[RMDB]
RNA sequence: GGGAACGACUCGAGUAGAGUCGAAAACGACGUCGACCUGAGCAAUCCGGUCGUGCAGGCUGAGCAGCUGAAUCAAAUCCACUAUCUGAUGAAUUGGGGUUCCAUUGUGAUGGGUGACAAGGAUGCGUACGUAUCCAAUAUUCGUAUUGGAUACGUAAAAAGAAACAACAACAACAAC
Reactivity to 2A3 in 0.01 (KOAc 150mM, MgCl2 10mM, bicine 150mM(pH8.5), 24C), signal-to-noise 9, nucleotides 027 to 126: c030g090a010c050g070u050c010g010a030c000c010u020g010a010g010c040a030a090u010c020c020g000g010u000c020g000u030g000c030a030g050g000c010u050g030a020g040c020a010g000c020u050g060a030a050u080c050a050a040a050u010c020c010a030c060u080a060u060c030u070g060a060u040g030a080a120u070u060g030g000g000g010u060u000c030c010a030u040u090g050u040g040a030u040g010g020g030u040g020a020c030a050a040g070g010a040u060g030c020g030
Reactivity to DMS in 0.01 (KOAc 150mM, MgCl2 10mM, bicine 150mM(pH8.5), 24C), signal-to-noise 9, nucleotides 027 to 126: c070g010a110c130g010u010c020g010a040c010c010u000g000a060g010c230a100a130u000c020c090g010g010u000c020g030u000g010c070a090g010g010c040u000g000a090g010c060a050g010c040u000g010a090a070u000c070a050a080a100u000c040c030a070c080u000a060u000c050u000g010a070u000g000a060a110u000u000g010g010g010g000u000u000c030c030a070u000u000g010u000g010a060u000g010g000g010u000g010a060c090a060a100g000g010a070u000g010c120g020